[RMDB]
Record summary: An RNA of 177 nucleotides, treated with 2A3 and DMS and read out base by base. The RNA was probed in 150 mM KOAc, 10 mM MgCl2 and 150 mM bicine (pH 8.5) at 24 C. It was measured as part of the RMDB library M2PK50. Reactivities are given for positions 27 through 126.

RNA sequence: GGGAACGACUCGAGUAGAGUCGAAAAUCUAGUGGCUUCGGCCACUAGAAAACCUAGUCAAAAUAACGCAAGACUAGGAAAGCGAAAGAACGAAAGUACAAAAAAGCUUACACUUCGGUGUAAGCAACUAUAUUCUAGAGUUCGCUCUAGAAUAUAGAAAAGAAACAACAACAACAAC
Reactivity to 2A3 in 0.01 (KOAc 150mM, MgCl2 10mM, bicine 150mM(pH8.5), 24C), signal-to-noise 3, nucleotides 027 to 126: u020c010u000a000g000u010g010g010c020u040u010c190g130g000c000c010a000c000u000a010g000a000a000a000a000c000c000u000a020g000u010c020a030a050a170a300u160a180a050c090g020c160a200a000g000a000c000u010a000g030g010a100a020a010g060c030g080a130a050a090g060a060a030c040g040a160a090a010g040u130a100c170a010a190a000a020a030a010g000c010u010u010a010c010a010c010u060u120c260g050g000u000g010u010a000a010g000c000a000a000
Reactivity to DMS in 0.01 (KOAc 150mM, MgCl2 10mM, bicine 150mM(pH8.5), 24C), signal-to-noise 3, nucleotides 027 to 126: u000c000u000a000g030u000g010g030c010u000u010c220g070g000c000c000a000c010u020a000g000a000a010a170a050c040c000u000a020g000u000c010a130a130a100a160u000a070a110c180g020c160a100a100g000a020c010u000a010g020g000a050a080a120g010c080g010a080a050a070g010a100a060c040g010a080a080a120g010u000a090c130a020a040a080a160a080a120g000c000u000u000a000c000a010c000u000u000c190g020g020u000g000u000a000a000g000c000a030a030
For 2A3 the reverse transcriptase was SuperScript II with manganese. DMS adducts were read by reverse transcription with MarathonRT.